The data come from the RNA Mapping Database (RMDB), library OK2TRN. The record gives the reactivity of an RNA of 177 nucleotides to DMS and 2A3. The RNA was probed in 150 mM KOAc, 10 mM MgCl2 and 150 mM bicine (pH 8.5) at 24 C. For 2A3, 1,891 sequencing reads were counted. DMS adducts were read by reverse transcription with MarathonRT.

RNA sequence: GGGAACGACUCGAGUAGAGUCGAAAAGGGGCGAUUCGCGCCGGCGCGGCUUGGGCUCUUCGCCGGCGCGCAUGUUCGUCGCGCGCGCGCCGUGCCGGGCCGCCGCGCGAUCGCCGAACGUGCGCGAACGCCCUAUUUUAUUCGUAAAAUAGGGCGUAAAAGAAACAACAACAACAAC
Reactivity to DMS in 0.01 (KOAc 150mM, MgCl2 10mM, bicine 150mM(pH8.5), 24C), signal-to-noise 4, nucleotides 027 to 126: g010g000g010g020c020g010a050u000u000c020g030c030g060c040c110g020g010c050g020c120g000g020c050u000u010g030g020g020c040u000c080u000u010c230g020c050c010g010g010c000g000c000g020c010a010u000g010u000u000c290g010u010c230g010c030g020c050g010c030g020c020g020c000c000g020u010g010c030c290g010g000g000c020c000g020c080c040g000c000g000c020g000a000u000c010g010c040c020g000a040a080c070g000u000g000c020g000c040g000a120
Reactivity to 2A3 in 0.01 (KOAc 150mM, MgCl2 10mM, bicine 150mM(pH8.5), 24C), signal-to-noise 1, nucleotides 027 to 126: g080g010g000g000c010g010a020u080u100c030g010c000g080c050c120g070g030c130g020c000g000g010c030u020u240g120g040g020c030u060c050u210u110c090g030c090c090g010g040c080g020c010g030c000a000u020g020u020u050c080g100u100c020g020c000g010c010g000c010g030c010g000c000c020g020u050g000c010c010g010g000g000c010c010g000c010c010g040c020g000c000g010a030u010c000g000c020c000g000a030a020c030g000u100g000c010g010c030g050a020